[RMDB]
RNA sequence: GGGAACGACUCGAGUAGAGUCGAAAACUGAAGCCAUGUACUUCACCGCCAAAGUGUCAAACACCCGUGCCGGUGACGAAGCCCUAGUGCUUGCAGCUGACGGUGUAAUUGACAGCGUGUCGGUUGGCUUGUAGACACAAUUCGUUGUGUCUACAAGAAAAGAAACAACAACAACAAC
Reactivity to DMS in 0.01 (KOAc 150mM, MgCl2 10mM, bicine 150mM(pH8.5), 24C), signal-to-noise 9, nucleotides 027 to 126: c060u000g010a060a040g010c020c030a070u000g010u010a110c060u000u000c060a070c010c010g000c050c040a060a100a130g010u000g000u000c020a020a040a120c090a020c030c020c160g010u000g030c190c020g020g010u000g010a120c300g000a050a020g000c000c010c220u010a110g020u010g010c010u000u000g010c060a220g000c020u000g010a030c030g000g000u000g010u010a070a110u000u000g000a010c000a050g000c180g020u000g010u000c030g000g000u010u000g010g000
Reactivity to 2A3 in 0.01 (KOAc 150mM, MgCl2 10mM, bicine 150mM(pH8.5), 24C), signal-to-noise 7, nucleotides 027 to 126: c030u050g040a030a000g020c020c010a120u140g050u120a070c030u030u040c020a010c010c020g020c010c000a100a070a050g090u030g000u010c000a010a040a040c020a040c040c090c030g010u050g130c080c020g020g020u040g040a030c070g110a010a000g010c010c010c050u140a070g020u100g250c000u000u040g040c010a010g000c000u030g010a010c010g000g020u050g000u050a130a210u020u030g010a010c000a020g070c090g040u060g030u040c010g010g000u030u060g050g000

This 177-nucleotide RNA was probed chemically with DMS and 2A3. 2A3 adducts were read by reverse transcription with SuperScript II with manganese. Conditions: 150 mM KOAc, 10 mM MgCl2 and 150 mM bicine (pH 8.5), 24 C. DMS adducts were read by reverse transcription with MarathonRT.